Annotation
Source: RMDB library OK3TST, as collected in RNAgym. An RNA of 207 nucleotides, treated with DMS and 2A3 and read out base by base. The DMS profile rests on 1,390 reads. For DMS the reverse transcriptase was MarathonRT.

RNA sequence: GGGAACGACUCGAGUAGAGUCGAAAAGACUAGAGUAAGUAAACACAACUGUGGCAUGUAGAGAGACAAAGGUAGGGAAGGUUAUGUCAUUAAUGUACCUCAAGUGUCACUAAAACCAUGUCAGGGCUGCCUGAGUUACCAAUGUCUGAGCUGAGAAGAGUAAAUGCAUCUUCGGAUGCAUUUACUCAAAAGAAACAACAACAACAAC
Reactivity to DMS in 0.01 (KOAc 150mM, MgCl2 10mM, bicine 150mM(pH8.5), 24C), signal-to-noise 1, nucleotides 027 to 156: g020a110c150u000a040g010a050g060u000a130a060g000u020a100a130a290c110a070c000a030a110c030u000g000u000g000g000c020a050u010g030u030a130g000a110g020a060g030a090c060a000a070a250g030g030u000a010g040g030g000a130a070g000g020u000u000a140u010g030u000c040a160u000u000a020a070u000g010u000a040c020c010u010c090a070a060g000u010g010u000c020a080c040u000a050a040a080a170c080c060a030u000g010u040c020a110g000g050g000c020u000g020c010c060u000g000a160g030u000u000a100c020c030a030a130u000g050u000c000u020g070a140g020c070u030g040a050g000a060a240
Reactivity to 2A3 in 0.01 (KOAc 150mM, MgCl2 10mM, bicine 150mM(pH8.5), 24C), signal-to-noise 3, nucleotides 027 to 156: g030a010c050u070a020g030a000g070u070a120a000g040u060a040a160a020c060a000c030a110a120c100u040g010u030g100g000c010a020u050g030u130a030g050a030g020a010g000a040c040a020a110a000g130g020u050a020g080g050g010a070a020g070g000u120u020a020u160g100u060c000a000u030u170a060a040u080g080u120a080c010c000u030c020a060a070g070u040g000u050c000a070c070u050a030a030a000a000c040c020a010u060g080u100c070a050g080g000g010c050u060g020c000c030u030g000a020g030u020u030a010c010c010a020a030u020g020u000c050u070g030a050g020c090u100g030a020g030a220a020
For 2A3 the reverse transcriptase was SuperScript II with manganese.